[RMDB]
RNA sequence: GGGAACGACUCGAGUAGAGUCGAAAACGGUGUCGUGAGACACCGAAGCAUGACGCUUCGGCGUCAUGCACCAGGCCGCGUGAGCGGCCUGGAACGAAGCAGCUUCGGCUGCUUCGAACGUCCGUUCUACGGAACGGACGAAGCGCUGAAUUCCCUGAAGGGAAACGGGGGACCCAAUCUUCAGGGGUGAAUCCCACGUAAGUGGGUAGGGCUAGUCUCUUUCGGCCCGAACCCGUCAGCUAACCUCGUAAGCGUGGAAAGAGGGUAGCAGGCUGUUCGCAGCCUGCAAAAGAAACAACAACAACAAC
Reactivity to DMS in 0.01 (KOAc 150mM, MgCl2 10mM, bicine 150mM(pH8.5), 24C), signal-to-noise 1, nucleotides 027 to 266: c020g000g010u000g000u000c000g000u050g010a270g000a010c000a010c000c010g000a040a130g010c010a000u000g010a010c010g000c000u020u010c170g010g010c010g010u000c000a000u010g040c000a030c000c010a030g000g070c000c020g040c000g010u030g000a220g050c010g060g050c010c000u000g020g000a100a200c040g000a020a010g020c030a010g020c000u000u020c250g010g000c000u010g000c000u020u000c000g000a090a200c070g000u020c000c000g040u000u000c000u000a070c130g030g020a010a000c000g000g000a020c000g000a090a110g010c030g030c000u000g000a060a140u010u000c000c000c040u000g060a170a160g000g010g000a000a020a010c000g000g000g000g000g000a100c220c270c010a240a050u040c130u020u040c110a120g000g000g000g010u020g000a000a180u010c000c000c000a010c000g010u030a130a090g000u000g000g000g010u000a000g000g000g000c000u000a040g000u000c020u030c010u000u000u000c010g000g010c000c000c000g000a110a010c000c010c010g000u000c090a110g000c040u000a120a260c000c000u010c000g000u030a140a030g010c000g020u010g010g010a000a020a030g010a010g010g000g000u000a120
Reactivity to 2A3 in 0.01 (KOAc 150mM, MgCl2 10mM, bicine 150mM(pH8.5), 24C), signal-to-noise 1, nucleotides 027 to 266: c010g000g000u010g000u000c000g010u040g040a110g000a020c010a000c010c000g000a050a030g000c000a000u020g000a000c010g000c000u030u020c300g130g000c000g000u010c000a000u000g000c000a010c000c020a020g000g010c000c000g020c020g080u170g110a060g000c000g010g060c000c000u000g000g000a000a020c010g000a000a000g000c000a030g030c060u120u110c290g130g000c000u000g000c020u000u000c000g000a080a010c000g000u020c000c000g010u000u000c000u010a020c230g180g000a010a000c010g000g000a000c010g000a050a050g010c020g010c010u020g120a150a020u020u060c010c000c010u110g300a300a240g000g000g020a000a010a030c010g000g000g000g040g010a000c000c000c010a020a090u060c100u290u100c100a030g050g030g060g000u000g000a000a000u010c010c000c000a000c000g020u060a070a050g000u010g030g040g010u010a010g010g000g000c000u000a010g050u110c010u010c000u100u010u060c020g000g000c000c000c010g000a000a010c000c020c020g080u030c000a000g000c010u040a000a000c000c000u010c000g000u010a000a020g030c020g030u040g030g000a030a050a000g030a000g090g100g100u130a030
The record gives the reactivity of an RNA of 307 nucleotides to DMS and 2A3. It was measured as part of the RMDB library POS240. For 2A3, 1,306 sequencing reads were counted. DMS adducts were read by reverse transcription with MarathonRT.